Structure probing data (DMS and 2A3) for a 177-nucleotide construct. Values cover nucleotides 27 to 126. 2A3 adducts were read by reverse transcription with SuperScript II with manganese. Conditions: 150 mM KOAc, 10 mM MgCl2 and 150 mM bicine (pH 8.5), 24 C. The 2A3 profile rests on 1,438 reads.
RNA sequence: GGGAACGACUCGAGUAGAGUCGAAAACGACCGCUCGGAUGGGCCGCUUCCGGCAAGAGGGGCCGAAAGUGUGAAGGGAGAGACCGCUCCGAGAGUUGGGAGAAGAAAGAGAGCGAAUGUGUCCGGACAUUGUCCAUUUGUUCGCAAAUGGACAAUGAAAAGAAACAACAACAACAAC
Reactivity to DMS in 0.01 (KOAc 150mM, MgCl2 10mM, bicine 150mM(pH8.5), 24C), signal-to-noise 1, nucleotides 027 to 126: c080g020a120c030c040g040c060u000c000g000g010a020u010g010g000g040c040c040g000c060u000u000c000c010g000g030c070a080a090g020a100g010g000g000g050c020c030g000a010a020a040g060u000g040u020g010a100a070g000g020g010a090g000a090g010a060c090c040g010c060u010c040c020g010a050g000a140g000u000u010g010g030g000a050g010a080a080g000a080a100a100g000a060g030a070g000c080g000a110a080u010g000u020g020u000c030c020g020g000a300
Reactivity to 2A3 in 0.01 (KOAc 150mM, MgCl2 10mM, bicine 150mM(pH8.5), 24C), signal-to-noise 1, nucleotides 027 to 126: c020g010a030c000c040g030c020u030c010g020g070a060u060g030g020g000c010c000g010c000u020u000c010c000g010g000c000a040a020g120a020g060g030g050g020c010c020g050a050a030a030g040u050g040u070g070a080a050g070g060g000a020g010a010g020a060c010c030g020c040u030c040c020g050a040g000a020g080u110u180g010g030g010a130g000a050a060g050a010a050a010g070a000g010a010g050c000g010a040a020u120g000u000g000u020c000c020g000g000a000